[RMDB]
RNA sequence: GGGAACGACUCGAGUAGAGUCGAAAAGAGAUGUAGUUCGCUACAUCUCAAACAUAAACAUGAGAAAAUGCAACGGAGGCACCGAAGCCAUAAAAGUAAUAAAAAGUACGUUGUUCGCAACGUACAAGAUAAGUGAUCAGUUCGCUGAUCACUUAUCAAAAGAAACAACAACAACAAC
Reactivity to 2A3 in 0.01 (KOAc 150mM, MgCl2 10mM, bicine 150mM(pH8.5), 24C), signal-to-noise 7, nucleotides 027 to 126: g010a000g000a010u000g000u020a010g010u030u060c220g010c090u000a000c000a000u000c000u000c000a000a010a000c030a030u230a040a110a010c040a070u160g040a050g080a110a100a050a060u100g010c010a010a030c050g050g010a040g070g000c030a020c050c050g050a050a010g000c010c000a010u100a090a120a020a000g110u100a040a140u100a110a130a010a010a010g000u000a000c000g000u000u000g030u040u060c220g000c060a000a000c000g000u000a010c000a000a000
Reactivity to DMS in 0.01 (KOAc 150mM, MgCl2 10mM, bicine 150mM(pH8.5), 24C), signal-to-noise 5, nucleotides 027 to 126: g010a000g010a010u000g020u010a000g010u000u010c230g040c000u000a010c000a000u000c000u000c000a030a090a070c110a090u000a060a060a060c080a060u010g020a110g010a040a060a070a040u000g000c070a040a070c100g000g010a060g020g010c050a040c030c040g010a060a150g010c030c060a050u010a050a060a050a100g000u000a060a080u010a040a070a080a120a100g010u000a000c010g000u000u000g000u000u010c200g030c010a020a000c000g000u000a000c000a030a060